[RMDB]
RNA sequence: GGGAACGACUCGAGUAGAGUCGAAAAUGGUGGCGGCCAGCACCGCGCGGAUGGCGAACAUGCCUGGACCGUUGUGCUGCAGCACCGCGUGCAGGAUGUCCGGGGUGUUGACGAACAGGUUGGGCCGAAGGAGUCUCUGUUUCGACAGAGACUCCUUAAAAGAAACAACAACAACAAC
Reactivity to DMS in 0.01 (KOAc 150mM, MgCl2 10mM, bicine 150mM(pH8.5), 24C), signal-to-noise 2, nucleotides 027 to 126: u020g000g030u010g090g000c040g040g020c050c000a060g010c030a050c020c060g010c070g020c040g000g000a110u010g000g000c050g000a070a020c120a050u000g020c020c000u010g000g020a070c080c100g040u000u010g010u000g010c030u010g010c100a130g000c000a050c070c030g020c140g000u000g000c010a040g030g020a070u010g020u010c050c040g010g000g030g020u010g000u010u000g020a090c070g000a140a170c090a080g000g030u020u000g010g030g000c090c090g000
Source: RMDB library OK2TST, as collected in RNAgym. Structure probing data (DMS) for a 177-nucleotide construct. High DMS reactivity at an A or C suggests that its Watson-Crick edge is free. The reactions ran in a buffer of 150 mM KOAc, 10 mM MgCl2 and 150 mM bicine (pH 8.5), at 24 C.